[RMDB]
RNA sequence: GGGAACGACUCGAGUAGAGUCGAAAAUAAUCUUUGGCAGUCAAUGGUCUGCUGAAGAAGCUGGUGAUCAAGUGAAAGUCACGCUCACUCACACCUACUACCUGCCAAAGGAUGAUGCCAAAACUAGUCAAUUCCUAGAACAGAUUGACGCUUACAAGCAUGAAAGCUCUUUCGAGAGCUUUCAUGCAAAAGAAACAACAACAACAAC
Reactivity to 2A3 in 0.01 (KOAc 150mM, MgCl2 10mM, bicine 150mM(pH8.5), 24C), signal-to-noise 1, nucleotides 027 to 156: u130a010a000u000c000u010u010u000g000g000c000a000g000u080c000a090a180u150g000g030u100c100u170g090c030u020g050a020a020g050a010a010g000c000u200g000g010u010g000a010u120c070a170a080g010u070g230a290a040a030g030u090c000a070c090g000c020u000c000a030c000u040c000a000c000a010c040c010u010a020c010u010a000c020c000u000g000c000c040a000a000a000g000g000a000u070g000a000u070g110c000c050a000a120a000a060c080u110a010g000u000c000a000a000u130u090c000c040u060a070g120a210a060c010a020g000a050u010u010g000a040c000g050c020u070u080a070c040a050a210